[RMDB]
Structure probing data (2A3 and DMS) for a 207-nucleotide construct. High 2A3 reactivity points to a flexible backbone, as in loops and unpaired stretches. The reactions ran in a buffer of 150 mM KOAc, 10 mM MgCl2 and 150 mM bicine (pH 8.5), at 24 C. DMS adducts were read by reverse transcription with MarathonRT. For DMS, 3,013 sequencing reads were counted. For 2A3 the reverse transcriptase was SuperScript II with manganese.

RNA sequence: GGGAACGACUCGAGUAGAGUCGAAAAUUUUUUGUAUAUGAAGAAAUGAGUAGGACUAAGAAGUUUUCAUUUUCUCAACAUUUUAUUGGCAAGUUGUCUCCUACAAAAUAAGAACCAUGCAGUACUGAAACAGAGUGUGUGUUUAGGGUUCCCCCUACCAUUAUUUAUGAUUCGUCAUAAAUAAUGGAAAAGAAACAACAACAACAAC
Reactivity to 2A3 in 0.01 (KOAc 150mM, MgCl2 10mM, bicine 150mM(pH8.5), 24C), signal-to-noise 2, nucleotides 027 to 156: u130u050u010u000u030u030g020u040a190u050a070u190g020a030a110g010a020a140a010u000g020a000g070u130a120g120g020a020c040u090a100a100g030a180a060g160u090u080u060u060c030a020u010u000u180u030c000u030c010a050a120c020a050u200u280u270u280a110u210u100g060g000c110a090a080g050u040u030g020u070c000u000c020c000u060a040c100a080a080a000a020u150a050a020g030a000a000c000c000a010u060g000c000a000g030u050a050c040u000g080a140a110a030c080a030g060a050g100u030g000u030g010u010g010u010u060u090a080g000g040g060u010u000c000c010c000c010c000u000a030
Reactivity to DMS in 0.01 (KOAc 150mM, MgCl2 10mM, bicine 150mM(pH8.5), 24C), signal-to-noise 2, nucleotides 027 to 156: u020u000u000u030u010u010g010u000a120u000a110u000g000a150a060g000a030a020a010u000g010a090g030u000a130g030g010a190c040u000a120a140g010a140a170g020u000u000u020u000c030a070u000u010u000u000c010u000c010a060a090c050a090u000u000u000u010a050u000u020g000g040c080a040a150g000u000u000g000u000c000u020c000c010u000a120c070a060a020a060a090u000a070a060g010a050a020c010c010a040u000g000c020a110g050u000a150c050u010g000a080a080a160c090a110g000a140g030u000g020u000g010u000g000u000u000u000a090g010g010g000u000u010c010c000c000c010c000u000a070